RNA sequence: GGGAACGACUCGAGUAGAGUCGAAAACAAGCGAUAGCUGGCAGAGAUGCCACGGAUUGCCAUCGAGCGAUGACUGCUCUAUUUGAAUUUGAUGAUGUAUAUUGGCAACGAUUCCUAGGGACAUCUAAAUGCCAGUGCUAUUCGUAGCACUGGCAUUAAAAGAAACAACAACAACAAC
Reactivity to 2A3 in 0.01 (KOAc 150mM, MgCl2 10mM, bicine 150mM(pH8.5), 24C), signal-to-noise 2, nucleotides 027 to 126: c020a000a070g080c000g080a090u050a090g000c060u020g010g000c010a030g010a010g000a100u030g000c000c000a000c020g000g010a110u050u050g000c000c010a030u070c120g010a010g040c020g110a120u140g170a150c060u140g010c010u000c000u040a160u040u090u120g240a190a120u140u060u230g100a110u040g020a030u030g080u060a110u040a050u140u100g020g020c010a010a020c060g100a080u020u000c010c000u000a030g010g000g000a020c010a020u080c000u030a000
Reactivity to DMS in 0.01 (KOAc 150mM, MgCl2 10mM, bicine 150mM(pH8.5), 24C), signal-to-noise 3, nucleotides 027 to 126: c110a080a090g040c070g000a080u020a060g010c170u010g000g010c010a010g000a160g000a140u000g010c020c010a090c090g000g020a090u010u000g000c010c020a050u020c130g000a070g010c010g000a110u030g000a130c190u020g030c060u040c010u010a060u000u010u010g010a100a080u000u000u020g010a080u010g010a080u000g010u010a050u010a100u000u000g010g020c010a030a030c110g000a250u000u000c000c000u000a110g020g010g000a020c050a060u000c040u010a040